[RMDB]
RNA sequence: GGGAACGACUCGAGUAGAGUCGAAAAGGCACCAGCACUUCUCGGAUGAUCGUCCAGCGAUUGCCGCCCAUGGCGCGCACGGCAUCGAUCAGCCCGCGGUCGACUUCGCGCAGCGACACUUCGGCGAUGCGGGCGUAGUAGGGUGUGGCGGCGAUGGUGUUCAGGUAGUGUUCGCACUACCUGAACAAAAAGAAACAACAACAACAAC
Reactivity to 2A3 in 0.01 (KOAc 150mM, MgCl2 10mM, bicine 150mM(pH8.5), 24C), signal-to-noise 1, nucleotides 027 to 156: g090g070c040a070c080c000a020g110c030a030c100u060u110c010u160c010g150g020a120u120g020a020u070c000g020u020c000c030a030g020c080g130a160u190u270g030c030c000g080c000c000c020a150u180g050g000c000g000c010g010c020a040c070g060g150c040a020u080c010g070a080u040c000a000g000c040c000c010g020c010g000g000u020c010g020a090c240u020u020c020g000c010g030c070a160g000c020g000a040c060a040c150u090u140c030g000g000c050g270a300u170g010c000g000g000g000c000g000u020a020g000u020a000g000g000g040u020g010u010g050g130c060g020g000c010g080a170u080g010g050

Annotation: The data come from the RNA Mapping Database (RMDB), library OK3TST. Structure probing data (2A3) for a 207-nucleotide construct. The reactions ran in a buffer of 150 mM KOAc, 10 mM MgCl2 and 150 mM bicine (pH 8.5), at 24 C.